[RMDB]
RNA sequence: GGGAACGACUCGAGUAGAGUCGAAAAGAUAUGGAGCAGGCAACAGCCUACGCAUCGGAAACGAUGCUAGGACAUGCCUAUUCCUAAGUCAAAGGCUGUUAUAUGGGUUCGCCCAUAUAACAGCCAAGACGUAUAUGAAGUUCGCUUCAUAUACGUCAAAAGAAACAACAACAACAAC
Reactivity to 2A3 in 0.01 (KOAc 150mM, MgCl2 10mM, bicine 150mM(pH8.5), 24C), signal-to-noise 2, nucleotides 027 to 126: g020a010u050a030u140g010g000a010g020c020a010g010g000c010a040a050c050a270g090c020c000u040a030c170g000c000a000u000c010g010g010a050a040a010c000g000a010u010g010c000u000a000g010g010a030c000a040u040g000c000c000u010a010u000u000c000c000u020a100a030g040u010c050a100a060a040g000g010c020u020g010u000u000a010u000a000u010g060g000g050u090u180c300g060c040c000c010a000u010a000u000a000a000c000a000g000c000c000a000a000
Reactivity to DMS in 0.01 (KOAc 150mM, MgCl2 10mM, bicine 150mM(pH8.5), 24C), signal-to-noise 6, nucleotides 027 to 126: g010a040u000a280u010g000g000a020g020c070a010g000g010c010a030a060c290a170g000c000c000u000a010c270g010c000a010u000c000g020g000a060a060a140c000g010a010u000g000c000u000a000g000g010a100c070a150u000g000c000c000u000a020u010u000c000c010u010a040a120g000u000c030a090a110a080g010g010c000u000g000u000u000a010u000a000u000g000g000g010u000u010c300g010c010c000c010a000u000a010u000a000a000c000a010g010c010c000a010a030